RNA sequence: GGGAACGACUCGAGUAGAGUCGAAAAAUGCAUAUAUCACAGUUUAUCCAUUCUCAUUUUGAUGGACACUUGGCUAGUUUCAAGUUUCCUAGUCAACAUGAUAAAGCUGCUAAGAACACAUCUAGACAAGUCUUUUUUCUUUUCUCUUGGGUAAAUAAUUCUAUAUAACCUUCGGGUUAUAUAGAAUAAAAGAAACAACAACAACAAC
Reactivity to 2A3 in 0.01 (KOAc 150mM, MgCl2 10mM, bicine 150mM(pH8.5), 24C), signal-to-noise 3, nucleotides 027 to 156: a010u050g020c040a020u090a050u050a010u250c050a040c020a070g000u030u040u040a050u000c000c010a010u130u070c040u020c060a030u020u020u000u070g030a040u070g000g010a000c010a000c050u010u020g000g000c010u020a060g050u080u170u130c020a030a000g010u010u040u000c000c000u010a010g040u020c010a000a000c010a040u040g020a020u090a070a090a050g020c040u030g000c010u030a040a010g050a080a010c060a010c000a100u010c030u040a020g040a050c020a030a030g100u070c000u040u040u010u040u040u060c000u050u040u040u010c020u000c000u050u070g050g010g120u300a180a050a040u300a080

This 207-nucleotide RNA was probed chemically with 2A3. For 2A3, 1,223 sequencing reads were counted.